Chemical mapping of a 207-nucleotide RNA with 2A3 and DMS. For DMS, 2,691 sequencing reads were counted. Reactivities are given for positions 27 through 156. 2A3 adducts were read by reverse transcription with SuperScript II with manganese.
[RMDB]
RNA sequence: GGGAACGACUCGAGUAGAGUCGAAAACAUUUCACAUAUAGUGGUUUGGUCUGGUAAAAGGAUCAUACUUCUCAUCCAAGGAAAACAUGCAUUAUCUCUUGUAUUGCCACAUUUUCUUUGCGGAGGUAAAAGGGAUAAAGAUCUCAGAAAGGGUAGACUCGACAAUGUAUUUCGAUACAUUGUCGAGAAAAGAAACAACAACAACAAC
Reactivity to 2A3 in 0.01 (KOAc 150mM, MgCl2 10mM, bicine 150mM(pH8.5), 24C), signal-to-noise 4, nucleotides 027 to 156: c010a020u090u160u160c070a060c060a040u260a030u070a140g030u020g050g020u030u020u030g020g020u010c030u020g050g040u140a110a130a070a100g050g010a020u030c010a010u030a040c010u100u000c040u050c040a110u000c020c030a010a040g050g000a020a040a060a050c020a040u120g030c000a020u070u020a050u070c020u010c010u060u050g060u070a100u040u050g020c010c010a080c010a060u090u080u120u070c080u040u100u080g020c060g020g020a030g020g000u040a060a070a010a000g010g000g010a000u020a010a040a000g090a030u040c070u030c070a030g090a120a060a010g020g010g030u070a050g020a030
Reactivity to DMS in 0.01 (KOAc 150mM, MgCl2 10mM, bicine 150mM(pH8.5), 24C), signal-to-noise 2, nucleotides 027 to 156: c050a130u000u000u000c030a090c030a090u000a190u010a120g020u010g020g030u000u020u000g000g010u000c020u000g010g030u000a110a080a100a250g020g000a020u000c020a120u010a070c030u000u000c030u000c100a130u010c030c050a050a130g010g010a040a060a070a060c030a060u010g000c010a190u010u000a030u010c060u010c050u010u000g000u000a030u000u040g010c010c160a010c080a050u000u000u020u020c150u020u010u000g010c010g040g000a070g000g000u010a010a000a010a040g020g000g000a030u000a020a040a090g000a160u000c030u000c050a130g000a120a080a060g010g030g030u000a120g030a180